[RMDB]
RNA sequence: GGGAACGACUCGAGUAGAGUCGAAAAGGCUUCUAAAGUUGGAGGGUAAUGCGUGAGGCUGGUUUCACAGAGCAGCGACUACUUCCCGCUUACAGCAGUGGACGGAUCACAGUUUAGCGUCGCUCAGAACCACUAUGGCCUGCUGGUCCGAUCUCAUUAUAUAUCAUGCCUUCGGGCAUGAUAUAUAAAAAGAAACAACAACAACAAC
Reactivity to 2A3 in 0.01 (KOAc 150mM, MgCl2 10mM, bicine 150mM(pH8.5), 24C), signal-to-noise 3, nucleotides 027 to 156: g030g000c000u030u010c040u200a090a010a080g040u060u050g050g000a050g030g000g030u130a100a040u180g090c060g020u020g020a080g030g000c020u010g010g060u040u110u160c080a110c040a010g050a010g100c030a000g000c010g020a010c010u030a030c010u050u060c000c020c000g020c010u040u120a090c050a040g060c010a020g040u030g030g050a020c010g010g020a010u050c060a030c020a060g030u010u080u150a060g010c040g080u070c080g030c030u040c010a030g050a060a060c020c010a040c060u080a110u080g030g020c000c000u050g010c070u010g010g020u000c020c020g030a140u060c020u010c020a010u020
Reactivity to DMS in 0.01 (KOAc 150mM, MgCl2 10mM, bicine 150mM(pH8.5), 24C), signal-to-noise 2, nucleotides 027 to 156: g000g020c020u020u000c070u010a090a050a130g020u000u000g010g020a070g010g000g000u000a040a070u000g030c080g000u000g010a080g040g030c020u020g030g000u000u000u010c100a130c070a170g020a050g000c040a090g000c000g030a100c060u000a030c030u000u000c020c000c020g030c080u000u000a090c080a160g000c080a120g020u000g000g030a120c080g020g000a050u020c060a110c040a090g010u010u000u000a070g020c080g020u000c050g060c010u000c060a140g010a080a090c030c010a050c080u000a040u010g020g000c080c060u000g010c000u000g020g030u000c030c000g000a170u000c030u010c020a220u020